[RMDB]
RNA sequence: GGGAACGACUCGAGUAGAGUCGAAAAAGUGAAAUCAUCUUUCAAGUGUGCGGGUAAACUAAAGGCAUUCUCUCACACACACUCUGGGAGAAUUUACUUAGAUUAGAACAUCGCUCCUAACAGAUCAUAUACCUGAACCUUUCGAGGUUCAGGUAUAAAAAGAAACAACAACAACAAC
Reactivity to DMS in 0.01 (KOAc 150mM, MgCl2 10mM, bicine 150mM(pH8.5), 24C), signal-to-noise 2, nucleotides 027 to 126: a060g030u020g000a080a060a100u010c220a050u000c050u000u010u020c100a020a090g000u010g020u010g030c010g080g010g010u010a070a090a060c070u000a010a030a080g010g010c300a060u010u020c010u000c010u010c020a060c090a070c130a050c120a020c180u000c110u030g000g000g000a000g000a030a020u000u000u000a090c050u000u010a090g010a140u000u000a090g000a070a090c100a060u020c010g010c010u000c010c040u000a050a110c170a080g010a070u020c190a120
Reactivity to 2A3 in 0.01 (KOAc 150mM, MgCl2 10mM, bicine 150mM(pH8.5), 24C), signal-to-noise 1, nucleotides 027 to 126: a010g090u080g000a010a070a020u030c010a020u020c020u030u020u060c080a070a000g030u000g020u000g170c000g040g000g060u090a030a080a060c020u050a050a120a000g060g010c010a000u060u000c030u050c010u010c010a040c000a010c020a010c010a010c090u130c030u040g000g030g020a040g000a000a010u070u030u010a040c000u000u000a020g130a150u070u110a090g040a090a010c010a070u060c030g000c010u060c000c000u020a080a040c040a030g070a020u080c030a030
An RNA of 177 nucleotides, treated with DMS and 2A3 and read out base by base.
For DMS, 1,021 sequencing reads were counted.
Values cover nucleotides 27 to 126.
The RNA was probed in 150 mM KOAc, 10 mM MgCl2 and 150 mM bicine (pH 8.5) at 24 C.